[RMDB]
RNA sequence: GGGAACGACUCGAGUAGAGUCGAAAACUGCUCCAACUGCGAAGAUUUCCAAGCCCGCCGCAUGAAGGCGCGUUUCAAAGACGAAAACGGCAAAAACCGCUUGGUACAUACUUUGAACGGCUCCGGCAAAUGGCAUUAAUUUCGAUUAAUGCCAUUUAAAAGAAACAACAACAACAAC
Reactivity to DMS in 0.01 (KOAc 150mM, MgCl2 10mM, bicine 150mM(pH8.5), 24C), signal-to-noise 8, nucleotides 027 to 126: c050u010g020c020u010c010c040a070a120c080u020g020c040g010a070a080g000a110u010u010u010c020c030a100a100g010c050c040c050g010c020c030g040c140a120u040g020a130a110g000g010c030g020c040g000u010u000u020c030a010a030a030g010a190c080g000a060a030a050a060c030g010g000c040a060a070a050a140a130c040c030g000c070u010u010g000g000u020a080c130a110u020a090c030u000u010u000g010a020a040c060g010g000c020u000c040c030g010g020c110
Reactivity to 2A3 in 0.01 (KOAc 150mM, MgCl2 10mM, bicine 150mM(pH8.5), 24C), signal-to-noise 8, nucleotides 027 to 126: c020u040g020c020u020c030c020a090a070c040u080g010c040g060a070a030g030a180u060u060u020c040c020a070a010g020c030c020c020g010c010c000g040c070a100u130g130a070a050g090g000c070g000c000g040u010u030u040c060a050a050a010g040a040c040g070a050a050a010a020c010g040g000c080a040a040a010a080a090c030c010g050c090u030u050g030g040u050a040c020a030u130a100c010u020u030u050g010a030a000c020g030g000c010u000c030c000g020g000c010
This 177-nucleotide RNA was probed chemically with DMS and 2A3. For DMS, 20,694 sequencing reads were counted. For 2A3 the reverse transcriptase was SuperScript II with manganese. Values cover nucleotides 27 to 126. The 2A3 profile rests on 11,742 reads. DMS adducts were read by reverse transcription with MarathonRT.